RNA sequence: GGGAACGACUCGAGUAGAGUCGAAAACCCGGGUUCGAUUCCCGGCAGCUCCACCGAAGGGCCAGGUCAGUGGCCCAUUUGCAGACUGCGACAGCCAUCACAGACCAAGGUAUCGUGCCACGGCAUGGUCAUCAGUCUCGUUCGCGAGACUGAUGGCAAAAGAAACAACAACAACAAC
Reactivity to 2A3 in 0.01 (KOAc 150mM, MgCl2 10mM, bicine 150mM(pH8.5), 24C), signal-to-noise 4, nucleotides 027 to 126: c000c000c000g000g010g000u030u040c030g020a200u020u020c000c000c000g000g000c010a020g000c010u010c000c000a030c010c000g030a050a050g010g000g000c000c000a020g030g060u140c040a020g060u020g000g000c000c000c000a000u000u000u010g000c010a000g020a040c020u020g000c010g020a020c010a000g000c000c000a040u040c010a010c000a020g040a020c010c010a040a010g050g000u030a020u060c030g010u020g000c000c000a020c020g020g000c020a030u040g010
Reactivity to DMS in 0.01 (KOAc 150mM, MgCl2 10mM, bicine 150mM(pH8.5), 24C), signal-to-noise 4, nucleotides 027 to 126: c040c000c000g020g000g000u000u020c030g000a270u000u000c010c000c020g000g020c060a050g000c050u010c010c020a080c110c030g000a080a090g000g020g010c000c010a030g010g010u020c150a110g010u000g000g000c010c010c020a020u010u000u030g000c090a070g000a070c040u000g000c020g000a050c090a070g000c000c020a060u010c030a080c080a070g030a060c030c020a070a090g010g020u010a080u020c040g010u000g000c050c000a080c060g020g020c050a050u020g010
The data come from the RNA Mapping Database (RMDB), library OK1LIB. The record gives the reactivity of an RNA of 177 nucleotides to 2A3 and DMS. Reactivities are rounded to 0.1 and cut off at 0 and 3.